[RMDB]
RNA sequence: GGGAACGACUCGAGUAGAGUCGAAAAGGAGCAAGACCAUAGCGAUAGGAAGAGAUGCUAGGAGUUGGUGGCGACCGGAGCGAGGAGAAAAGCAAAGAAAGCAACGGGGCUAGCCGACGGGUGUUCCGCGCAUGGAUGUUCGCAUCCAUGAAAAGAAACAACAACAACAAC
Reactivity to DMS in 0.01 (KOAc 150mM, MgCl2 10mM, bicine 150mM(pH8.5), 24C), signal-to-noise 9, nucleotides 027 to 129: g040g000a010g030c080a060a040g030a070c050c060a050u010a120g000c090g020a090u030a120g010g020a040a020g000a040g010a070u000g020c070u030a040g010g020a080g030u010u000g020g030u040g010g000c060g010a070c030c020g000g000a090g000c080g020a060g020g020a050g010a040a030a060a090g000c150a030a050a080g010a050a060a070g000c050a050a100c100g010g010g010g010c080u000a100g000c020c010g030a070c090g000g010g020u030g000u000u000c020c030g030c150g010
Reactivity to 2A3 in 0.01 (KOAc 150mM, MgCl2 10mM, bicine 150mM(pH8.5), 24C), signal-to-noise 9, nucleotides 027 to 129: g040g000a020g010c040a050a040g040a100c020c010a080u120a020g030c040g080a070u100a090g050g030a030a030g030a000g010a030u090g030c030u040a040g020g030a080g040u090u070g040g020u030g010g010c030g040a080c020c010g010g010a020g020c050g010a030g050g040a030g050a030a100a020a000g060c080a050a050a060g090a040a080a000g030c020a030a060c040g030g010g020g000c010u030a050g030c010c000g020a030c010g020g000g010u050g030u030u000c030c020g070c010g000